[RMDB]
RNA sequence: GGGAACGACUCGAGUAGAGUCGAAAACUGAGUCUGUGGGCUAUGGGGACAUGAAGCCCAUCACUGUGGGGGGCAAGAUCGUGGGGUCCCUGUGUGCCAUUGCAGGUGUGUUAACCAUUGCUUUGCCAGUGCCAGUGAUUGUCUCUAACCUGUAGGGCAGUUCAGGAUACUUCGGUAUCCUGAACUGAAAAGAAACAACAACAACAAC
Reactivity to 2A3 in 0.01 (KOAc 150mM, MgCl2 10mM, bicine 150mM(pH8.5), 24C), signal-to-noise 1, nucleotides 027 to 156: c050u090g000a030g050u050c000u120g020u070g030g000g000c020u050a050u060g040g040g000g000a010c030a030u190g080a040a000g000c010c000c000a010u010c030a060c060u080g020u290g080g120g000g000g000g000c000a010a060g040a050u080c060g050u030g000g000g030g020u000c000c000c000u030g000u010g000u010g000c000c120a150u100u140g000c010a000g010g010u000g020u040g010u000u150a090a020c020c000a040u100u120g000c020u040u060u140g010c030c020a030g010u020g120c040c010a010g020u010g040a010u020u040g020u000c000u000c000u030a090a300c020c010u040g100u100a050g020g050g000
Description
The record gives the reactivity of an RNA of 207 nucleotides to 2A3. Conditions: 150 mM KOAc, 10 mM MgCl2 and 150 mM bicine (pH 8.5), 24 C. It was measured as part of the RMDB library RFM130. The 2A3 profile rests on 527 reads.